[RMDB]
RNA sequence: GGGAACGACUCGAGUAGAGUCGAAAAUCAGUGAAGGGCAGAAUUGCGAUAUUGUGCAGCUUCUGGAAUAUGCAGCCCUAGAGAUCAUGCUUGAUUGCGCUUACCAGGCUUACUACCUAAGGAUAGCCUCAAUAGGUAUAUUCGUAUACCUAUUGAGAAAAGAAACAACAACAACAAC
Reactivity to 2A3 in 0.01 (KOAc 150mM, MgCl2 10mM, bicine 150mM(pH8.5), 24C), signal-to-noise 7, nucleotides 027 to 126: u060c010a010g060u030g120a060a030g020g020g000c020a020g050a190a080u080u080g020c030g030a030u040a060u170u180g090u080g030c020a040g060c030u070u010c020u060g030g070a060a050u130a060u170g020c030a030g010c010c000c000u030a030g020a000g000a060u070c020a040u120g050c010u090u070g030a070u090u110g020c040g000c020u010u010a060c020c000a000g010g000c000u020u020a030c030u040a020c000c020u020a060a020g060g010a090u060a070g030c010
Reactivity to DMS in 0.01 (KOAc 150mM, MgCl2 10mM, bicine 150mM(pH8.5), 24C), signal-to-noise 9, nucleotides 027 to 126: u010c050a090g020u010g010a080a050g010g000g020c020a070g010a060a060u000u000g020c110g010a120u010a060u000u000g010u010g000c030a060g010c080u000u000c020u000g010g010a090a080u010a070u000g010c090a110g000c030c010c020u000a090g000a110g000a070u000c080a060u010g010c060u000u000g000a090u000u000g010c090g010c040u000u000a140c060c040a060g000g000c020u000u000a090c120u000a080c030c030u010a070a090g010g010a170u010a060g010c110